Background:
Chemical mapping of a 177-nucleotide RNA with DMS. DMS adducts were read by reverse transcription with MarathonRT.

RNA sequence: GGGAACGACUCGAGUAGAGUCGAAAAGAGCACUGAGGUGCUGCCAUGGGCAUGGCCAGCCUCCAACAUUGCCAGUGGCCAGGGAGUAGGCGGGAGUGGCCAGGAAGUCAGGUGGCGAUUUCUGUGGCAUGGUCACGCCAUUCGUGGCGUGACCAUGAAAAGAAACAACAACAACAAC
Reactivity to DMS in 0.01 (KOAc 150mM, MgCl2 10mM, bicine 150mM(pH8.5), 24C), signal-to-noise 1, nucleotides 027 to 126: g000a040g020c020a010c020u000g000a070g010g060u010g000c000u000g010c070c030a070u000g050g020g020c030a100u010g000g030c040c050a100g030c000c010u020c060c070a150a130c070a070u020u010g010c040c040a090g060u010g010g000c060c050a100g010g020g000a090g030u000a130g000g000c070g010g000g000a100g030u020g010g020c020c040a140g030g010a080a070g010u000c050a070g020g010u020g010g040c010g010a090u000u000u010c040u000g080u000g030g000
Description:
In probing experiments dimethyl sulfate is read out at A N1 and C N3, which are open when not base-paired.